Record summary:
The record gives the reactivity of an RNA of 177 nucleotides to DMS and 2A3. The RNA was probed in 150 mM KOAc, 10 mM MgCl2 and 150 mM bicine (pH 8.5) at 24 C. The DMS profile rests on 3,431 reads.

RNA sequence: GGGAACGACUCGAGUAGAGUCGAAAAGCCAUAGUAGGAGGGGUAAUCUAUCUGGGGAAGUUGGUGGUUCUUCUUCCUCCUUGCCCUCAGGUGCACAGACUGGGGAGUGGAUAGAUAAUGACUAUGGGUAUUAAUCUAGCUUCGGCUAGAUUAAUACAAAAGAAACAACAACAACAAC
Reactivity to DMS in 0.01 (KOAc 150mM, MgCl2 10mM, bicine 150mM(pH8.5), 24C), signal-to-noise 2, nucleotides 027 to 126: g010c000c000a000u000a020g010u000a070g010g000a100g010g010g010g010u000a160a110u000c000u000a010u000c010u000g020g000g000g000a010a020g020u000u000g000g000u000g020g000u010u020c010u010u010c000u000u000c000c000u000c000c140u000u020g000c110c000c000u000c030a010g000g000u000g020c120a090c160a070g000a070c010u000g010g010g000g010a110g020u000g010g000a030u000a000g000a020u000a110a090u010g000a040c010u000a030u000g010g010
Reactivity to 2A3 in 0.01 (KOAc 150mM, MgCl2 10mM, bicine 150mM(pH8.5), 24C), signal-to-noise 2, nucleotides 027 to 126: g030c010c000a010u020a010g040u010a010g030g240a050g000g040g010g020u030a010a030u010c000u030a010u040c000u000g010g020g000g000a000a020g030u010u030g040g040u020g050g030u090u050c000u010u000c000u000u000c000c000u000c000c010u120u180g020c010c010c000u020c000a000g040g020u120g030c110a060c000a170g130a090c030u000g000g020g010g000a120g010u040g050g000a010u010a020g020a020u030a040a090u080g030a000c010u010a000u020g040g060
Values cover nucleotides 27 to 126. Source: RMDB library RFMREP, as collected in RNAgym.